[RMDB]
RNA sequence: GGGAACGACUCGAGUAGAGUCGAAAAGAUAUGGAACUCGGGUCCGUUCCCCAGACAUGUCCGAACACUCGGAAACGAGUGGGAGGACAACAGCUGGGGAACGGAUCUCUAGCGUGGUUCCUAAGUCCUGCUCUAAUAUCUUCGGAUAUUAGAGCAGAAAAGAAACAACAACAACAAC
Reactivity to DMS in 0.01 (KOAc 150mM, MgCl2 10mM, bicine 150mM(pH8.5), 24C), signal-to-noise 3, nucleotides 027 to 126: g000a140u010a250u020g000g020a020a010c000u020c070g010g020g010u000c010c010g050u000u000c010c000c010c000a030g010a030c150a190u000g010u010c020c000g000a300a290c000a000c000u000c020g010g000a100a120a280c000g000a010g010u000g000g000g000a300g000g020a000c010a020a000c280a130g000c010u000g030g000g020g000a000a020c020g000g010a000u000c000u030c130u020a150g050c160g040u030g020g000u000u000c000c000u000a110a150g000u010c020

This 177-nucleotide RNA was probed chemically with DMS. The RNA was probed in 150 mM KOAc, 10 mM MgCl2 and 150 mM bicine (pH 8.5) at 24 C. DMS (dimethyl sulfate) methylates the pairing face of unpaired adenines and cytosines. The data come from the RNA Mapping Database (RMDB), library TTRINS. For DMS the reverse transcriptase was MarathonRT.